[RMDB]
RNA sequence: GGGAACGACUCGAGUAGAGUCGAAAACGCCAGUGGCAGGUGAUCUGUACGUUAUGUGCUGACUCGCAUCCUAUAAGCGUAGAUGCGAUGCUCGUCGUUGCGCAGGUGAGUAUCCCUGGUCCUAGCAUCUAGGCUUCGGCUUCGGUCGAAGUCUAGAAAAAGAAACAACAACAACAAC
Reactivity to 2A3 in 0.01 (KOAc 150mM, MgCl2 10mM, bicine 150mM(pH8.5), 24C), signal-to-noise 9, nucleotides 027 to 126: c040g010c000c000a020g020u060g040g000c020a010g000g080u050g040a030u010c010u020g040u060a030c010g020u040u090a040u090g060u060g030c030u070g020a010c010u000c010g000c000a000u010c010c030u080a030u030a120a060g070c050g050u020a010g010a010u010g000c000g000a010u030g010c030u010c020g040u020c010g030u050u050g000c000g000c010a000g000g010u020g030a060g020u060a050u020c000c000c000u000g010g010u010c000c000u000a010g010c010a040
Reactivity to DMS in 0.01 (KOAc 150mM, MgCl2 10mM, bicine 150mM(pH8.5), 24C), signal-to-noise 9, nucleotides 027 to 126: c160g010c020c010a040g020u020g010g020c100a060g010g020u020g010a050u010c030u010g010u020a050c050g020u010u020a050u030g010u020g000c020u010g000a070c070u000c020g000c010a010u000c100c060u010a080u020a090a140g010c230g010u000a050g000a020u000g000c030g010a020u010g000c080u000c030g010u000c020g000u020u010g010c010g010c020a090g000g010u010g000a100g000u020a090u010c020c000c000u000g000g000u010c030c010u010a070g010c160a160

This 177-nucleotide RNA was probed chemically with 2A3 and DMS.
DMS adducts were read by reverse transcription with MarathonRT.
For 2A3, 43,806 sequencing reads were counted.
2A3 adducts were read by reverse transcription with SuperScript II with manganese.
DMS (dimethyl sulfate) methylates the pairing face of unpaired adenines and cytosines.
Source: RMDB library OK1LIB, as collected in RNAgym.
The RNA was probed in 150 mM KOAc, 10 mM MgCl2 and 150 mM bicine (pH 8.5) at 24 C.